[RMDB]
RNA sequence: GGGAACGACUCGAGUAGAGUCGAAAAGAUAUGGACAAUGUGAUAGCGAGCUUGGAUUUAUAGUUCCAGUAUGUCGGAAACGACAUACGGAACUAUUGUCAGCUCAGCUAUCACAUUGUCCUAAGUCCCUUAUACUUUUCUUCGGAAAAGUAUAAGGAAAAGAAACAACAACAACAAC
Reactivity to DMS in 0.01 (KOAc 150mM, MgCl2 10mM, bicine 150mM(pH8.5), 24C), signal-to-noise 3, nucleotides 027 to 126: g000a110u010a300u010g000g000a020c000a010a000u000g000u000g000a020u000a010g010c010g000a010g000c010u020u010g020g020a020u000u010u000a010u000a010g000u000u000c010c010a130g040u000a000u000g000u000c000g000g000a160a100a270c000g000a030c000a000u000a000c010g000g000a000a010c000u000a000u000u010g020u000c000a040g010c000u000c000a070g040c000u000a000u000c010a000c010a000u000u000g000u000c000c000u000a010a100g000u000c050